[RMDB]
RNA sequence: GGGAACGACUCGAGUAGAGUCGAAAAGGAAGCGUUCGAGUUCUCGUUUUCGAUCGUACCCCUCGAUGCAUCAUUCGAGGAGGUGGUGCUGAGGGCGGGAGGAGAUAUCAAAGAGGUGGAUAUCACCAACAUAACACUUAUUCGUAAGUGUUAUGUUAAAAGAAACAACAACAACAAC
Reactivity to DMS in 0.01 (KOAc 150mM, MgCl2 10mM, bicine 150mM(pH8.5), 24C), signal-to-noise 9, nucleotides 027 to 126: g010g010a080a090g010c070g010u000u000c030g000a150g010u000u010c060u000c060g010u000u000u000u000c030g010a070u000c040g020u010a140c050c010c000c010u000c010g010a060u000g010c160a110u010c150a070u000u000c030g000a060g010g010a080g020g020u000g000g000u000g010c070u000g010a130g000g000g010c110g000g010g010a090g010g000a110g000a040u000a040u000c050a060a080a120g010a110g010g020u000g000g000a070u000a050u000c030a080c080c060
Reactivity to 2A3 in 0.01 (KOAc 150mM, MgCl2 10mM, bicine 150mM(pH8.5), 24C), signal-to-noise 9, nucleotides 027 to 126: g070g020a070a020g050c040g060u040u030c030g030a040g050u110u040c070u020c060g030u050u030u040u040c030g020a050u030c030g030u090a050c000c000c010c000u000c000g040a040u060g050c080a180u080c030a070u130u110c020g030a040g020g020a110g050g000u030g000g020u080g000c050u070g020a060g010g030g010c090g010g000g010a030g010g020a070g010a020u060a020u060c080a110a090a040g120a070g070g050u070g030g020a060u040a030u180c020a020c020c010